An RNA of 177 nucleotides, treated with 2A3 and read out base by base. Values cover nucleotides 27 to 126. The reactions ran in a buffer of 150 mM KOAc, 10 mM MgCl2 and 150 mM bicine (pH 8.5), at 24 C. It was measured as part of the RMDB library OK1LIB.
RNA sequence: GGGAACGACUCGAGUAGAGUCGAAAACUGUUUACACUCAGUCUACGUGAGAACCGCAUUGUUUCGACUGAUCUCUAAACGUGCAGGUGGUCACUGCAAUGCAUUUGUUUACAUUUCACAGCUACAACGGGUGGCUAUCCUUCGGGAUAGCCACCCGAAAAGAAACAACAACAACAAC
Reactivity to 2A3 in 0.01 (KOAc 150mM, MgCl2 10mM, bicine 150mM(pH8.5), 24C), signal-to-noise 1, nucleotides 027 to 126: c090u090g060u130u170u200a110c050a030c000u000c000a040g120u000c110u170a090c000g050u010g090a080g090a300a090c020c170g050c000a000u050u090g150u040u170u060c050g000a030c070u090g160a070u030c000u000c070u100a090a140a000c040g000u010g010c030a010g000g000u030g030g000u090c000a000c190u020g000c010a000a000u000g010c040a070u070u000u130g100u000u090u030a010c010a020u100u150u180c210a150c020a050g000c060u050a090c000a130a020